Source: RMDB library RFMREP, as collected in RNAgym. An RNA of 177 nucleotides, treated with DMS and 2A3 and read out base by base. The 2A3 profile rests on 1,700 reads. 2A3 adducts were read by reverse transcription with SuperScript II with manganese. For DMS, 4,311 sequencing reads were counted.
[RMDB]
RNA sequence: GGGAACGACUCGAGUAGAGUCGAAAAUCUUUGUACACACCGCCCGUCGUUAUCUAAGAUGGAGGUGCGGGUGAAGAUGUGAGUGUGUAGAGUUGGUGCGAUGCAUGGAAGUUAAUGACGAGUGCGACCAGAACUUAAAGUUCGCUUUAAGUUCUGGAAAAGAAACAACAACAACAAC
Reactivity to DMS in 0.01 (KOAc 150mM, MgCl2 10mM, bicine 150mM(pH8.5), 24C), signal-to-noise 3, nucleotides 027 to 126: u000c010u000u000u000g010u010a070c030a060c020a030c020c000g000c080c000c010g020u010c060g010u010u010a060u000c120u010a130a150g010a060u000g000g020a200g000g030u000g000c010g010g010g020u000g000a040a030g010a080u010g010u020g010a060g030u000g010u000g030u000a040g010a080g010u000u000g000g010u000g000c050g000a100u000g010c050a050u000g000g010a060a090g000u010u000a060a090u010g000a080c060g010a130g030u000g010c070g010a240
Reactivity to 2A3 in 0.01 (KOAc 150mM, MgCl2 10mM, bicine 150mM(pH8.5), 24C), signal-to-noise 2, nucleotides 027 to 126: u030c010u010u050u130g120u080a010c010a000c000a000c020c050g030c030c010c010g040u060c000g060u090u060a140u100c070u070a070a130g070a120u140g030g010a020g040g030u020g000c000g000g000g010u030g030a040a020g050a050u110g030u080g140a060g000u090g010u010g040u030a040g000a020g090u030u090g020g000u020g000c050g030a050u070g000c020a020u020g050g050a060a050g040u040u100a170a020u090g070a010c060g010a040g080u030g010c010g020a050